The record gives the reactivity of an RNA of 177 nucleotides to DMS and 2A3. Source: RMDB library OK2TST, as collected in RNAgym. DMS adducts were read by reverse transcription with MarathonRT. The DMS profile rests on 7,516 reads.
[RMDB]
RNA sequence: GGGAACGACUCGAGUAGAGUCGAAAAUUCGCGUCAUGGACGGGUUCGAUCAGCUCGGCCGAUUGGAUCGAAAUGUGGAACGUCGGUGCCCGGUUCCGGGUCGCCGUGCGGGGGACCGUGGUGAUCGCAAUACUCCGAGGUUCGCCUCGGAGUAUUGAAAAGAAACAACAACAACAAC
Reactivity to DMS in 0.01 (KOAc 150mM, MgCl2 10mM, bicine 150mM(pH8.5), 24C), signal-to-noise 4, nucleotides 027 to 126: u010u010c050g020c080g020u000c040a100u000g000g010a050c050g010g000g020u000u000c010g010a030u000c030a060g010c040u000c040g000g030c020c020g000a140u000u000g020g000a110u010c070g010a040a070a110u010g020u010g010g010a120a110c050g020u000c000g010g010u000g010c010c010c000g010g010u000u000c200c010g020g010g010u000c050g040c010c020g020u000g010c020g000g010g010g000g010a090c060c050g020u000g000g010u000g000a030u000c050g010
Reactivity to 2A3 in 0.01 (KOAc 150mM, MgCl2 10mM, bicine 150mM(pH8.5), 24C), signal-to-noise 2, nucleotides 027 to 126: u050u010c020g000c030g070u020c030a040u080g030g050a020c000g000g000g020u070u080c040g020a040u010c000a020g000c030u010c020g040g000c010c010g100a070u070u210g100g030a080u110c060g050a040a110a080u210g020u090g140g040a090a020c020g030u010c000g040g030u020g020c000c010c010g040g000u290u080c160c030g010g000g010u160c060g000c020c040g000u080g050c010g000g010g000g010g000a010c010c020g020u070g040g050u040g000a030u080c040g000